[RMDB]
RNA sequence: GGGAACGACUCGAGUAGAGUCGAAAAGCCACUCAGAGGGCGCUACCAUGCAAACUAGGGCUGGCUACUCUUGCACAGAAUCACCUUUCUAUAAUAACCAGUGCAAGAAGGGUUAUUAUACCAUUUAAAAAUCGUGAAUGCUUCGGCAUUCACGAAACCCAUAUAGCAAGUUCGCUUGCUAUAUGGGAAAAGAAACAACAACAACAAC
Reactivity to 2A3 in 0.01 (KOAc 150mM, MgCl2 10mM, bicine 150mM(pH8.5), 24C), signal-to-noise 8, nucleotides 027 to 156: g000c000c000a010c000u020c010a120g010a030g150g010g020c010g000c010u110a290c080c100a110u270g000c010a010a030a040c010u030a040g000g050g040c150u010g010g010c010u030a050c000u000c000u000u010g000c000a000c000a010g120a110a100u090c030a200c060c010u110u300u190c100u120a000u000a010a000u000a000a000c000c000a000g000u000g000c000a000a000g000a010a010g000g000g000u000u000a000u000u010a010u010a020c020c020a120u100u200u300a060a100a020a040a080u030c000g000u000g000a000a000u000g000c020u030u030c080g060g000c000a000u000u000c000a000c000g000a000a000a000
Reactivity to DMS in 0.01 (KOAc 150mM, MgCl2 10mM, bicine 150mM(pH8.5), 24C), signal-to-noise 2, nucleotides 027 to 156: g010c010c030a070c040u030c070a160g040a100g000g010g000c150g030c060u000a110c070c040a150u000g040c020a080a190a170c030u000a080g010g030g020c080u000g030g040c050u000a200c050u020c000u010u000g000c000a050c010a030g020a180a140u010c090a070c050c020u000u000u010c100u000a050u000a030a030u000a010a030c010c000a300g000u000g010c010a020a060g000a040a100g000g000g050u000u000a000u000u000a010u000a120c140c030a150u010u000u020a010a120a080a100a080u000c000g000u000g000a020a020u000g050c000u000u010c300g070g010c000a040u000u000c000a000c000g010a000a000a020